[RMDB]
RNA sequence: GGGAACGACUCGAGUAGAGUCGAAAAGUAUAUGACUUCGGUCAUAUACAAAGGGCGAUCGAAGGCCAACAGCGACUUCAACGCCAACCGAUCAAGAAGAAAAAAGAUGCACCUUCGGGUGCAUCAAGUAAAUAAGGGACUUCGGUCCCUUAUUUACAAAAGAAACAACAACAACAAC
Reactivity to DMS in 0.01 (KOAc 150mM, MgCl2 10mM, bicine 150mM(pH8.5), 24C), signal-to-noise 2, nucleotides 027 to 126: g000u000a020u010a000u020g000a010c000u010u010c210g020g000u000c000a000u000a030u000a000c000a070a090a150g000g010g000c010g020a090u010c120g010a010a030g000g020c030c030a100a100c300a200g010c080g000a080c010u000u000c010a140a150c060g010c030c000a080a180c040c020g010a080u010c100a130a120g010a070a110g030a000a000a070a050a140a170g010a020u000g000c000a010c000c000u010u010c150g030g020g000u000g030c000a000u000c000a020a090
Reactivity to 2A3 in 0.01 (KOAc 150mM, MgCl2 10mM, bicine 150mM(pH8.5), 24C), signal-to-noise 2, nucleotides 027 to 126: g020u010a020u010a010u020g010a000c000u030u080c180g010g020u000c020a010u000a000u010a010c010a000a080a020g060g030g000c000g020a080u120c040g000a050a000g050g020c040c010a080a060c080a080g150c070g070a060c030u030u020c030a050a020c010g010c000c010a020a050c020c000g000a070u170c090a030a100g110a110a020g090a000a290a030a000a000a000g000a010u020g000c030a000c000c030u060u160c300g110g030g000u020g020c000a000u000c000a000a000
Structure probing data (DMS and 2A3) for a 177-nucleotide construct. The data come from the RNA Mapping Database (RMDB), library M2PK50. For DMS, 1,217 sequencing reads were counted. For 2A3 the reverse transcriptase was SuperScript II with manganese. The 2A3 profile rests on 1,196 reads.